[RMDB]
RNA sequence: GGGAACGACUCGAGUAGAGUCGAAAAGAUAUGGAACCCACCGUGAACGUUGAAACCACUGACUCGGAAACGAGUUUGGUGGAGUUCGUGGGUUCCUAAGUCAAACCUGGGUGUUCGCACCCAGGAACUGCAUAUAUGCCUUCGGGCAUAUAUGCAGAAAAGAAACAACAACAACAAC
Reactivity to 2A3 in 0.01 (KOAc 150mM, MgCl2 10mM, bicine 150mM(pH8.5), 24C), signal-to-noise 1, nucleotides 027 to 126: g000a020u010a010u070g000g000a000a000c000c070c000a000c050c300g300u300g090a000a000c010g060u220u300g100a270a070a050c010c000a050c090u040g030a020c030u000c010g000g000a000a000a020c010g000a010g000u000u070u220g010g000u000g000g030a010g000u020u010c010g010u010g000g020g000u000u030c000c000u000a000a000g010u020c000a030a060a100c000c020u000g060g020g020u010g050u060u110c300g000c120a000c010c030c000a000g000g000a020a020
Reactivity to DMS in 0.01 (KOAc 150mM, MgCl2 10mM, bicine 150mM(pH8.5), 24C), signal-to-noise 2, nucleotides 027 to 126: g000a000u000a000u010g000g000a000a000c000c000c000a060c000c300g020u030g050a000a000c000g000u010u030g020a260a170a030c000c000a020c140u000g000a020c000u000c000g000g000a010a000a030c000g000a030g000u000u000u000g020g020u000g020g020a000g020u000u010c000g010u000g000g000g010u000u020c000c010u010a030a030g000u000c020a080a160a180c000c000u000g000g010g010u020g000u010u040c280g060c020a000c000c000c000a000g010g000a050a110